[RMDB]
An RNA of 207 nucleotides, treated with DMS and 2A3 and read out base by base. Source: RMDB library OK3TST, as collected in RNAgym.
RNA sequence: GGGAACGACUCGAGUAGAGUCGAAAAAGUGGACGUUUAUUGUUACCGAGCAUUGUUUGUUUUGUCCACGCUCGGACUUCCUUCUGGCGAAAGCCAGUUCACAGGCAGCUAGCCGAACCCAGCCCGUAGCAGCAACCUAGAGGCUAGCGCUACGUUACCCUCAUAAAUUAUUCGUAAUUUAUGAGGGAAAAGAAACAACAACAACAAC
Reactivity to DMS in 0.01 (KOAc 150mM, MgCl2 10mM, bicine 150mM(pH8.5), 24C), signal-to-noise 1, nucleotides 027 to 156: a040g060u000g010g000a050c030g020u000u000u000a020u030u000g060u010u000a200c020c020g000a070g020c020a030u000u010g040u000u000u020g030u000u010u000u020g010u000c020c060a100c030g030c030u000c030g000g010a110c130u010u000c030c010u000u020c010u000g000g040c010g020a220a080a250g030c010c000a020g000u000u000c050a080c080a080g020g000c060a060g020c000u000a030g000c000c010g060a070a100c000c020c050a110g010c120c040c040g050u000a100g020c020a080g000c010a000a010c010c030u000a130g010a300g080g010c020u000a030g020c010g010c000u000a000c050g040u000u000a120
Reactivity to 2A3 in 0.01 (KOAc 150mM, MgCl2 10mM, bicine 150mM(pH8.5), 24C), signal-to-noise 2, nucleotides 027 to 156: a010g020u000g000g010a010c030g000u010u200u060a170u170u110g060u090u100a100c040c120g000a070g060c090a120u080u140g070u120u100u020g050u010u120u090u050g020u000c030c020a010c020g000c020u010c020g010g050a080c010u060u060c020c050u030u080c020u000g000g030c000g060a090a030a000g000c040c000a010g000u090u140c140a090c010a050g000g000c010a000g040c070u050a010g060c010c010g040a040a050c000c000c000a020g040c000c010c010g020u010a010g030c130a000g010c000a000a060c020c030u090a050g030a110g150g000c010u010a020g010c020g000c000u020a020c010g020u040u050a040
In probing experiments dimethyl sulfate is read out at A N1 and C N3, which are open when not base-paired. The RNA was probed in 150 mM KOAc, 10 mM MgCl2 and 150 mM bicine (pH 8.5) at 24 C. For DMS the reverse transcriptase was MarathonRT.